[RMDB]
RNA sequence: GGGAACGACUCGAGUAGAGUCGAAAAAUGCCGCAUUCAGCGACGGUGACUCUAGUGGGCUACUGUCGAUCUAGCGUUGACAUCUACAUACUAUAUAGUAAUACCAAUACUCAAGACUACGAAACGGGGUAAUAUGCUAGUUCGCUAGCAUAUUACCAAAAGAAACAACAACAACAAC
Reactivity to DMS in 0.01 (KOAc 150mM, MgCl2 10mM, bicine 150mM(pH8.5), 24C), signal-to-noise 3, nucleotides 027 to 126: a060u020g010c010c010g020c070a140u060u020c210a090g030c050g020a110c000g020g000u000g000a060c010u000c040u080a100g030u060g000g010g010c000u010a090c030u000g000u010c010g000a060u000c050u000a080g010c050g000u020u000g000a050c040a030u000c060u020a050c110a090u020a030c070u010a110u020a080u010a030g010u020a010a030u010a150c080c060a060a100u020a040c030u020c100a030a040g000a120c090u000a050c040g000a090a060a030c100g000g040
Reactivity to 2A3 in 0.01 (KOAc 150mM, MgCl2 10mM, bicine 150mM(pH8.5), 24C), signal-to-noise 9, nucleotides 027 to 126: a000u090g020c020c000g000c030a040u090u090c060a030g050c000g020a010c000g040g020u020g040a040c000u000c010u050a100g110u300g060g020g000c020u060a020c010u060g030u030c010g010a050u010c040u080a040g010c010g060u040u100g050a030c000a030u030c040u070a030c020a100u100a050c050u060a040u080a070u090a210g050u050a060a070u050a120c010c030a060a040u050a070c020u030c050a060a080g070a120c050u060a050c150g100a100a120a010c070g070g000

Chemical mapping of a 177-nucleotide RNA with DMS and 2A3. The RNA was probed in 150 mM KOAc, 10 mM MgCl2 and 150 mM bicine (pH 8.5) at 24 C.